[RMDB]
RNA sequence: GGGAACGACUCGAGUAGAGUCGAAAAGAUCUGCGCCGAUCCGAAACGCUAGCAAACAGCCCGCAUCAUGUCGUCUCCAAACUUCGACGUGGUGAAAUACUGAGCUUAUGCGAGUAAGCCUGUUAGCAAUAGAUCAGAACGUUCGCGUUCUGAUCAAUCUCUAUCUAUCGUUCGCGAUAGAUAGAGAAAAAGAAACAACAACAACAAC
Reactivity to DMS in 0.01 (KOAc 150mM, MgCl2 10mM, bicine 150mM(pH8.5), 24C), signal-to-noise 2, nucleotides 027 to 156: g010a080u000c030u000g010c020g040c030c040g000a090u000c010c010g000a100a070a050c040g000c020u010a040g030c040a060a100a100c110a120g020c030c040c020g030c040a040u000c010a060u010g020u010c000g010u010c080u000c070c230a010a200a130c150u000u000c020g000a010c020g070u010g000g030u000g000a070a060a110u000a110c050u010g000a130g010c010u000u000a200u000g020c210g000a170g020u000a050a060g020c010c020u000g030u010u000a100g020c040a080a140u020a090g000a050u000c000a030g000a010a020c010g030u000u000c270g020c040g040u010u010c000u030g000a000u000c000a010a060
Reactivity to 2A3 in 0.01 (KOAc 150mM, MgCl2 10mM, bicine 150mM(pH8.5), 24C), signal-to-noise 6, nucleotides 027 to 156: g030a050u030c020u070g030c050g030c050c030g030a030u010c030c030g060a060a040a030c060g010c050u060a030g020c040a050a020a140c040a070g040c010c000c040g000c000a010u000c000a000u010g000u000c010g020u000c050u070c120c110a100a140a110c090u080u040c030g000a000c000g010u010g000g000u000g010a030a020a010u150a020c040u030g020a010g020c000u030u020a020u080g080c050g020a040g070u010a010a020g000c000c010u030g020u050u060a020g000c030a090a130u040a180g000a000u000c000a000g000a000a010c000g010u040u050c200g010c000g100u000u000c020u000g000a000u000c000a010a010